This 177-nucleotide RNA was probed chemically with DMS and 2A3.
RNA sequence: GGGAACGACUCGAGUAGAGUCGAAAAGACACCCUUCGCAGAUGACCUCCUCGUUGGUGAGUGUCGGUAAUGUUGUCAGUCACAGGCAACAGUUAACGAUCUGCGUAAAUAAAAAGAGAAGAACAAAGCGUAAUAUGAUGUUCGCAUCAUAUUACGCAAAAGAAACAACAACAACAAC
Reactivity to DMS in 0.01 (KOAc 150mM, MgCl2 10mM, bicine 150mM(pH8.5), 24C), signal-to-noise 3, nucleotides 027 to 126: g000a140c220a060c000c000c020u020u010c000g020c000a020g000a010u000g010a020c030c000u050c040c010u010c150g030u080u030g020g020u010g000a000g000u000g000u010c010g020g000u010a100a030u000g000u010u000g040u010c010a060g010u020c260a070c300a080g000g030c000a010a000c010a000g030u030u010a040a020c060g010a020u010c000u000g000c010g000u000a000a010a020u090a060a050a100a100a080g030a140g000a100a090g000a060a110c090a070a160a070
Reactivity to 2A3 in 0.01 (KOAc 150mM, MgCl2 10mM, bicine 150mM(pH8.5), 24C), signal-to-noise 5, nucleotides 027 to 126: g090a010c020a090c060c000c000u010u030c010g000c020a000g000a040u100g030a040c000c000u010c000c000u080c090g190u130u280g090g060u270g070a040g010u300g020u030c070g040g000u050a070a040u020g000u000u000g020u000c010a030g160u120c060a040c020a090g010g000c000a000a000c000a010g030u030u110a050a010c050g020a030u000c000u000g010c000g000u010a010a020a020u100a010a070a010a010a020g200a020g040a220a010g020a090a030c060a140a060a010
Conditions: 150 mM KOAc, 10 mM MgCl2 and 150 mM bicine (pH 8.5), 24 C. High DMS reactivity at an A or C suggests that its Watson-Crick edge is free.